Structure probing data (2A3) for a 177-nucleotide construct.
The 2A3 profile rests on 1,263 reads.
RNA sequence: GGGAACGACUCGAGUAGAGUCGAAAAGUGACACUGUUCGCAGUGUCACAAAGUGGUGGAUCUACAACCACAAUAACUAGAUCAAAGAUCUAGUCUAGAUCAAAAGCAUACAGUUCGCUGUAUGCAACGCGAUAUCCUGGUUCGCCAGGAUAUCGCGAAAAGAAACAACAACAACAAC
Reactivity to 2A3 in 0.01 (KOAc 150mM, MgCl2 10mM, bicine 150mM(pH8.5), 24C), signal-to-noise 1, nucleotides 027 to 126: g000u000g000a010c000a000c000u000g020u000u040c200g010c070a000g000u020g000u040c000a000c000a010a000a000g000u000g010g010u010g010g060a230u000c000u080a100c040a050a040c000c020a010c080a010a010u230a000a000c010u000a000g000a030u000c070a300a210a100g000a030u010c000u000a000g030u000c020u090a160g000a160u110c090a050a000a000a110g010c000a000u010a000c000a010g000u010u010c120g060c140u000g000u030a000u020g010c000a000a000
The RNA was probed in 150 mM KOAc, 10 mM MgCl2 and 150 mM bicine (pH 8.5) at 24 C.